This 207-nucleotide RNA was probed chemically with 2A3 and DMS. The RNA was probed in 150 mM KOAc, 10 mM MgCl2 and 150 mM bicine (pH 8.5) at 24 C. Values are in units of 0.01, from 0 to 300, in steps of 10. The DMS profile rests on 2,545 reads. For 2A3, 2,163 sequencing reads were counted.

[RMDB]
RNA sequence: GGGAACGACUCGAGUAGAGUCGAAAACGGGUGGUACACCUGUACCGCCGCGAUACCGCGAGAUAAUUCCGCCAGGGACUCGUGGACGGACUUAGAAUUCGACUGCAACGUCAGAGACCUGCACACCCACCCCGACAAGAAGGAGUGGCCGGAGUACGUACUAAUUGACUUUCGAGUCAAUUAGUACAAAAGAAACAACAACAACAAC
Reactivity to 2A3 in 0.01 (KOAc 150mM, MgCl2 10mM, bicine 150mM(pH8.5), 24C), signal-to-noise 4, nucleotides 027 to 156: c030g020g010g010u030g040g000u060a040c110a080c060c100u090g010u020a020c030c010g010c000c020g090c010g010a050u130a080c010c020g040c050g000a040g000a120u280a160a120u230u000c030c010g070c130c090a090g040g000g060a290c020u020c080g300u050g020g000a040c010g040g000a020c010u090u120a080g110a170a160u170u100c070g030a050c070u050g020c050a110a060c050g050u050c050a000g020a000g000a080c010c010u060g000c060a040c000a010c080c000c000a020c000c020c000c000g030a050c050a120a010g100a040a020g030g010a040g010u010g010g050c020c030g020g000a040g040u080a050c070
Reactivity to DMS in 0.01 (KOAc 150mM, MgCl2 10mM, bicine 150mM(pH8.5), 24C), signal-to-noise 2, nucleotides 027 to 156: c030g000g050g030u000g020g020u000a030c030a180c120c180u030g040u000a060c040c000g020c030c000g000c010g000a130u010a100c040c030g000c030g080a040g010a140u000a110a180u000u000c040c020g080c190c080a260g030g010g000a150c070u000c040g020u010g020g000a080c020g070g000a070c100u040u000a100g040a120a240u010u000c040g000a120c090u040g000c080a130a170c010g040u000c020a100g000a110g000a150c020c060u010g000c030a140c000a070c110c000c020a020c030c020c020c030g020a190c040a110a210g020a120a270g000g000a070g000u000g020g050c020c000g010g000a200g030u010a030c160